[RMDB]
RNA sequence: GGGAACGACUCGAGUAGAGUCGAAAAGCUGGUUUGGCGGGAAGCGGACCUGCGAACUGGUAUUAUUGUUGGGUUCGUAACUCAAUAAAUUACCCUAGCGCUUAAAAACACUCACCUCCCGCAACCAGGCAGGUACGUCGUUCGCGACGUACCUGCCAAAAGAAACAACAACAACAAC
Reactivity to 2A3 in 0.01 (KOAc 150mM, MgCl2 10mM, bicine 150mM(pH8.5), 24C), signal-to-noise 1, nucleotides 027 to 126: g040c030u000g000g020u030u060u230g080g020c020g000g000g000a010a030g040c110g050g040a160c000c030u010g010c000g030a240a180c010u040g030g000u000a000u150u040a130u040u010g000u000u000g000g000g000u050u090c120g010u190a000a000c020u040c000a000a000u020a020a030a010u030u010a000c040c000c000u100a080g030c070g000c030u070u030a070a150a000a160a010c150a030c020u050c010a130c010c020u010c000c000c000g000c080a000a000c000c000a000